Structure probing data (DMS and 2A3) for a 177-nucleotide construct. Reactivities are given for positions 27 through 126. For 2A3 the reverse transcriptase was SuperScript II with manganese. The RNA was probed in 150 mM KOAc, 10 mM MgCl2 and 150 mM bicine (pH 8.5) at 24 C. The 2A3 profile rests on 947 reads.
[RMDB]
RNA sequence: GGGAACGACUCGAGUAGAGUCGAAAAAAAGUCCCCUCUAAAGGGACACAUCUAAGGACUAUUAUAGUCUAUGAUGAACGACACCAAGAGUUGGCUGAUAGCGACAUGAAAAGGACACGAACAGACAGUCUCCUUAAUCUUUCGAGAUUAAGGAGACAAAAGAAACAACAACAACAAC
Reactivity to DMS in 0.01 (KOAc 150mM, MgCl2 10mM, bicine 150mM(pH8.5), 24C), signal-to-noise 3, nucleotides 027 to 126: a040a090a060g000u000c000c010c010c020u010c140u070a050a060a100g020g000g000a050c010a170c010a050u000c000u040a100a280g000g000a030c000u000a120u010u050a120u040a020g010u010c010u020a300u020g000a000u020g020a050a050c140g000a080c070a120c040c050a020a080g000a070g020u000u000g000g020c030u000g000a030u010a090g000c070g000a040c080a010u030g010a040a050a100a040g020g020a040c100a070c090g000a060a130c080a030g000a150c280a080
Reactivity to 2A3 in 0.01 (KOAc 150mM, MgCl2 10mM, bicine 150mM(pH8.5), 24C), signal-to-noise 3, nucleotides 027 to 126: a000a000a000g000u000c030c000c010c000u070c010u110a050a020a000g000g020g000a000c000a010c000a000u000c020u020a030a110g020g000a010c010u010a070u300u100a160u220a140g010u000c000u010a040u060g000a000u000g020a140a000c050g020a010c060a010c040c000a060a000g010a000g050u090u080g010g010c010u010g070a030u050a140g040c010g060a050c010a030u160g060a030a030a130a030g050g000a040c060a020c080g140a270a040c020a060g190a020c060a070